[RMDB]
RNA sequence: GGGAACGACUCGAGUAGAGUCGAAAAGAUAUGGAUCUUGUGGACAUGUUAGGGAUCGGAAACGAUCCUAGUAACAACAGCCACACGAGAUCCUAAGUCAAAAGGAUGAUGGUUCGCCAUCAUCCAAGUUCAGGAAAUUGUUCGCAAUUUCCUGAACAAAAGAAACAACAACAACAAC
Reactivity to 2A3 in 0.01 (KOAc 150mM, MgCl2 10mM, bicine 150mM(pH8.5), 24C), signal-to-noise 3, nucleotides 027 to 126: g020a010u030a030u090g010g000a010u000c000u060u000g000u020g030g020a070c100a300u300g030u020u040a050g000g020g000a000u000c010g000g010a030a000a000c000g000a010u000c000c010u020a040g040u040a040a040c300a030a050c070a100g040c020c000a050c020a000c130g050a030g000a050u000c000c000u000a020a000g010u010c020a030a050a060a120g000g000a000u010g000a000u000g000g100u060u080c300g070c100c000a000u000c000a000u000c000c000a000a010
Reactivity to DMS in 0.01 (KOAc 150mM, MgCl2 10mM, bicine 150mM(pH8.5), 24C), signal-to-noise 4, nucleotides 027 to 126: g000a020u000a200u000g000g000a010u010c000u000u010g020u010g020g020a030c080a180u030g010u010u000a170g000g000g000a010u000c000g010g010a070a060a100c010g010a000u000c000c000u010a040g020u010a010a060c030a110a070c210a200g000c030c050a090c030a030c300g000a020g000a020u000c000c000u010a010a100g010u000c060a070a060a120a150g000g000a020u000g010a030u000g010g000u010u020c300g020c010c010a010u000c000a010u000c000c000a020a020